[RMDB]
RNA sequence: GGGAACGACUCGAGUAGAGUCGAAAAGAGCUAAUAUCUUCUUCGUAGGUGCAUACGUUCAAGCUGACUAUACCGUAGCUGAAGGGUUCCGAAACUACGGAGUAGGUAGUCGAAUGAACGGCUCGAAGGGUUAAGUUUACUUCGGUAAACUUAACCCAAAAGAAACAACAACAACAAC
Reactivity to 2A3 in 0.01 (KOAc 150mM, MgCl2 10mM, bicine 150mM(pH8.5), 24C), signal-to-noise 4, nucleotides 027 to 126: g070a000g030c060u090a080a050u080a230u190c050u130u000c010u030u050c050g150u160a030g000g120u060g030c040a060u070a120c020g010u000u000c000a020a000g000c010u030g020a010c000u020a010u040a120c010c030g020u000a010g000c080u050g090a070a070g060g030g050u260u040c030c010g030a040a020a000c010u010a000c030g020g030a030g060u110a070g010g170u000a000g000u020c010g020a030a040u030g010a010a000c000g000g000c000u000c010g050a110a050
Reactivity to DMS in 0.01 (KOAc 150mM, MgCl2 10mM, bicine 150mM(pH8.5), 24C), signal-to-noise 3, nucleotides 027 to 126: g000a030g000c060u080a100a090u020a080u000c050u000u050c030u000u040c080g010u010a010g000g000u020g020c130a270u020a170c060g020u020u000c000a000a020g000c070u060g010a010c010u000a020u010a100c010c050g030u000a000g020c060u000g030a150a110g000g000g030u030u030c030c010g020a220a070a060c010u000a010c000g000g010a120g010u040a060g040g000u000a000g000u000c000g000a300a160u000g010a020a030c030g030g000c020u000c010g020a040a150